[RMDB]
RNA sequence: GGGAACGACUCGAGUAGAGUCGAAAAUCGAGGCGAGAGCGAGCAGGUCGGCCAUGGUGGCUUCAGGAUCCCAGCUGUCUUCUUGUGCUCAGACUGUGGGUGUUUAGGUCGUACGUACACCUUGUGCCGGUCAUUCUACAUUCGUGUAGAAUGACCGAAAAGAAACAACAACAACAAC
Reactivity to 2A3 in 0.01 (KOAc 150mM, MgCl2 10mM, bicine 150mM(pH8.5), 24C), signal-to-noise 2, nucleotides 027 to 126: u040c010g010a010g000g060c010g010a080g000a030g080c030g000a000g030c030a040g030g070u050c000g000g090c000c020a040u090g140g000u070g050g040c010u090u060c070a040g050g040a040u060c000c000c000a040g030c020u000g030u030c000u080u000c010u070u150g080u070g060c020u010c030a030g040a140c040u060g040u180g060g000g020u110g110u040u090u090a040g030g000u030c060g030u040a110c040g040u010a020c030a070c020c000u020u040g090u080g040c050
Reactivity to DMS in 0.01 (KOAc 150mM, MgCl2 10mM, bicine 150mM(pH8.5), 24C), signal-to-noise 3, nucleotides 027 to 126: u010c050g010a120g000g010c060g000a110g020a110g010c070g000a090g020c060a070g010g000u000c040g010g000c040c030a080u000g010g010u000g010g020c040u010u010c100a090g000g010a070u000c020c020c020a090g000c020u000g020u000c020u000u000c060u010u010g010u000g020c050u010c060a090g010a060c060u000g010u000g000g010g030u010g010u000u000u000a120g020g010u000c090g010u010a080c120g000u010a060c060a040c020c010u010u010g020u010g020c100
An RNA of 177 nucleotides, treated with 2A3 and DMS and read out base by base. It was measured as part of the RMDB library OK2TST. Reactivities are given for positions 27 through 126. The DMS profile rests on 4,375 reads. 2A3 adducts were read by reverse transcription with SuperScript II with manganese. Reactivities are rounded to 0.1 and cut off at 0 and 3.